[RMDB]
Source: RMDB library OK1LIB, as collected in RNAgym. Chemical mapping of a 177-nucleotide RNA with 2A3. The RNA was probed in 150 mM KOAc, 10 mM MgCl2 and 150 mM bicine (pH 8.5) at 24 C. 2A3 adducts were read by reverse transcription with SuperScript II with manganese.
RNA sequence: GGGAACGACUCGAGUAGAGUCGAAAAGCUGGUCCGGGUUGGCCCCAGCGAACACUUGACGAACGGUUAGUCCCGUCUUGUGGAUUAGGACGUUCUAGGUCCGGUCUGCCCCCUAGUUCGUCCGAAACCUCCACCCUCGAUUCGUCGAGGGUGGAGGAAAAGAAACAACAACAACAAC
Reactivity to 2A3 in 0.01 (KOAc 150mM, MgCl2 10mM, bicine 150mM(pH8.5), 24C), signal-to-noise 1, nucleotides 027 to 126: g000c000u000g030g000u000c010c000g020g030g070u140u160g200g000c170c000c000c000a000g030c000g000a000a010c000a000c000u020u130g000a000c010g030a120a020c010g160g000u200u140a000g140u300c030c000c000g000u030c000u050u030g000u000g000g050a000u010u180a080g000g000a000c000g030u020u010c000u000a000g000g000u120c090c100g000g010u060c120u230g150c000c010c000c000c000u000a000g000u000u000c000g000u010c000c000g000a000a000a000